The record gives the reactivity of an RNA of 177 nucleotides to 2A3 and DMS. The reactions ran in a buffer of 150 mM KOAc, 10 mM MgCl2 and 150 mM bicine (pH 8.5), at 24 C. For DMS the reverse transcriptase was MarathonRT.
RNA sequence: GGGAACGACUCGAGUAGAGUCGAAAAGAUCAUCCAUAUUAUUGUAAAGGAGGUAUGUAACAUGGCAGGCGAUAUCGUAGGUACAAUCGGUGACUUCGUUAAAUUAAUCAUCGAAACUGUAAACAAACCCUGUAUCAGAUUUCGAUCUGAUACAGGGAAAAGAAACAACAACAACAAC
Reactivity to 2A3 in 0.01 (KOAc 150mM, MgCl2 10mM, bicine 150mM(pH8.5), 24C), signal-to-noise 5, nucleotides 027 to 126: g040a050u120c040a050u000c030c020a040u100a060u210u130a110u080u170g140u110a030a020a060g050g010a010g040g030u100a040u110g080u040a030a060c020a050u090g020g020c040a000g000g150c010g010a010u010a010u120c090g040u070a030g030g000u070a010c040a050a070u020c000g000g020u000g010a010c040u110u010c070g130u050u060a010a010a000u090u120a020a010u010c050a010u010c000g030a050a050a020c060u070g010u170a070a060a000c020a010a030a030
Reactivity to DMS in 0.01 (KOAc 150mM, MgCl2 10mM, bicine 150mM(pH8.5), 24C), signal-to-noise 5, nucleotides 027 to 126: g010a110u030c050a090u010c030c020a090u030a110u000u020a100u020u010g020u030a050a110a090g010g000a080g000g010u010a040u000g000u030a060a080c110a050u020g000g020c050a060g000g020c030g020a040u010a040u010c050g010u000a030g000g000u010a040c100a050a120u000c010g000g020u000g000a030c090u010u010c120g010u000u020a040a060a120u030u010a070a110u000c030a020u010c010g010a040a060a080c140u030g000u010a050a040a090c110a070a050a110